The record gives the reactivity of an RNA of 177 nucleotides to 2A3 and DMS.
The reactions ran in a buffer of 150 mM KOAc, 10 mM MgCl2 and 150 mM bicine (pH 8.5), at 24 C.
2A3 adducts were read by reverse transcription with SuperScript II with manganese.
[RMDB]
RNA sequence: GGGAACGACUCGAGUAGAGUCGAAAAGAUAUGGACGAUUCAGCUUGGAUUUAUUCGUAACAUCCAUCGGAAACGAUGGUGGAAUUGUCAGCUGGGUCCUAAGUCAAAACGCGUGUUCGCACGCGAAGUAGUGUUUUAUCUUCGGAUAAAACACUACAAAAGAAACAACAACAACAAC
Reactivity to 2A3 in 0.01 (KOAc 150mM, MgCl2 10mM, bicine 150mM(pH8.5), 24C), signal-to-noise 7, nucleotides 027 to 126: g030a010u140a050u200g030g010a010c050g110a160u140u090c020a010g020c050u160u290g120g000a080u300u280u110a050u060u090c020g010u020a030a020c040a300u100c010c000a000u000c000g010g010a050a040a040c000g000a010u010g010g000u010g000g010a010a020u040u030g010u020c010a000g010c010u000g000g040g010u000c000c000u030a120a040g050u040c030a020a020a060a150c010g000c000g000u020g030u090u110c300g000c130a000c010g000c010g020a050a000
Reactivity to DMS in 0.01 (KOAc 150mM, MgCl2 10mM, bicine 150mM(pH8.5), 24C), signal-to-noise 6, nucleotides 027 to 126: g000a080u010a210u000g000g010a090c100g010a100u000u010c010a010g010c010u010u020g020g000a020u000u010u000a010u000u000c010g030u000a030a060c210a050u010c000c000a010u000c000g010g000a110a080a190c010g010a010u000g000g010u010g000g000a020a010u000u000g000u000c000a020g010c000u000g010g000g010u000c010c050u000a050a170g010u000c050a080a050a110a160c030g010c000g030u000g010u010u010c210g020c010a020c000g000c000g010a030a060
For DMS the reverse transcriptase was MarathonRT.